RNA sequence: GGGAACGACUCGAGUAGAGUCGAAAAAUAAAAAAAUGCAAACAGAGUCCGUCGUCCCGGCGUCUGGUCUCCGUCCGUCCGCCCAUCCGUCUGUCCGACCAUGCCACGCCCUUUUGAGGACAGCCGCCGAUGAGCUGAUCUUCGGAUCAGCUCAUCGAAAAGAAACAACAACAACAAC
Reactivity to 2A3 in 0.01 (KOAc 150mM, MgCl2 10mM, bicine 150mM(pH8.5), 24C), signal-to-noise 1, nucleotides 027 to 126: a000u300a030a060a030a040a000a000a000u300g020c080a040a050a120c030a040g100a030g130u060c010c000g040u110c030g040u030c100c050c000g000g080c000g070u060c000u040g000g070u000c010u000c020c000g060u000c060c000g000u030c000c000g050c030c030c000a040u010c010c030g010u020c080u070g060u060c020c000g040a000c020c050a050u100g030c000c050a040c070g000c000c000c000u100u150u000u090g030a010g010g010a040c020a030g090c070c000g000c050
This 177-nucleotide RNA was probed chemically with 2A3.
The RNA was probed in 150 mM KOAc, 10 mM MgCl2 and 150 mM bicine (pH 8.5) at 24 C.
Source: RMDB library OK1LIB, as collected in RNAgym.